RNA sequence: GGGAACGACUCGAGUAGAGUCGAAAAGAAAGAAAGAAAGAAUAGAGAGAAGCUACUCUCUGUUCCCCAACCCCUCUAUCAGAUCAAGAUCCGAAAAAACUUGGCGCUACCCCCGCCAAGUUUUUAAUUCUAAUUCCCUUUUCGAAGGGAAUUAGAAAAAAGAAACAACAACAACAAC
Reactivity to DMS in 0.01 (KOAc 150mM, MgCl2 10mM, bicine 150mM(pH8.5), 24C), signal-to-noise 1, nucleotides 027 to 126: g020a090a100a150g010a080a140a110g000a150a080a110g010a060a030u020a070g010a010g000a010g010a290a210g030c300u030a040c000u000c000u000c000u000g020u000u020c000c020c020c020a160a130c040c030c000c030u000c050u000a060u000c000a070g030a060u010c070a010a060g030a100u000c020c010g000a000a050a020a040a000a020c000u000u000g020g010c000g000c100u030a200c040c040c060c300c010g000c000c000a040a000g010u000u000u000u000u000a000a130
An RNA of 177 nucleotides, treated with DMS and read out base by base.
It was measured as part of the RMDB library RFM100.
For DMS, 1,071 sequencing reads were counted.